[RMDB]
RNA sequence: GGGAACGACUCGAGUAGAGUCGAAAAAGGAAGUCGAGGUCGGGGGGGAGCGGCUGCUUCGGUCGCCGCGGAUCACUGGCGUCCAGCGGAGAAACAGGAGCUCGUCUCCUUCCUUUCGCUGCUGGCUCAAUCAGUAUUUCUUCGGAAAUACUGAUUGAAAAGAAACAACAACAACAAC
Reactivity to DMS in 0.01 (KOAc 150mM, MgCl2 10mM, bicine 150mM(pH8.5), 24C), signal-to-noise 3, nucleotides 027 to 126: a140g000g010a170a060g020u020c050g010a060g000g010u010c080g010g000g000g000g010g000g000a100g010c020g000g000c030u000g010c010u010u010c190g020g010u000c300g000c000c020g020c020g010g000a030u000c150a130c110u020g000g010c110g000u010c000c000a040g010c020g000g010a070g000a020a010a020c180a020g010g000a020g020c030u030c270g000u020c000u010c000c000u000u010c020c030u000u000u000c010g000c010u000g010c020u000g000g000c290u000
Reactivity to 2A3 in 0.01 (KOAc 150mM, MgCl2 10mM, bicine 150mM(pH8.5), 24C), signal-to-noise 3, nucleotides 027 to 126: a000g090g010a050a020g090u110c050g040a020g000g030u120c020g020g010g000g010g000g000g010a050g000c010g040g010c090u040g020c020u040u050c120g100g010u020c010g000c010c000g000c000g000g010a020u060c030a050c200u100g100g000c060g060u060c000c010a010g000c000g050g020a010g010a040a050a090c300a120g010g010a000g020c020u080c170g180u090c050u030c010c000u000u020c000c000u000u010u000c020g000c030u020g020c020u020g000g000c010u020
An RNA of 177 nucleotides, treated with DMS and 2A3 and read out base by base. 2A3 adducts were read by reverse transcription with SuperScript II with manganese. The reactions ran in a buffer of 150 mM KOAc, 10 mM MgCl2 and 150 mM bicine (pH 8.5), at 24 C. DMS adducts were read by reverse transcription with MarathonRT.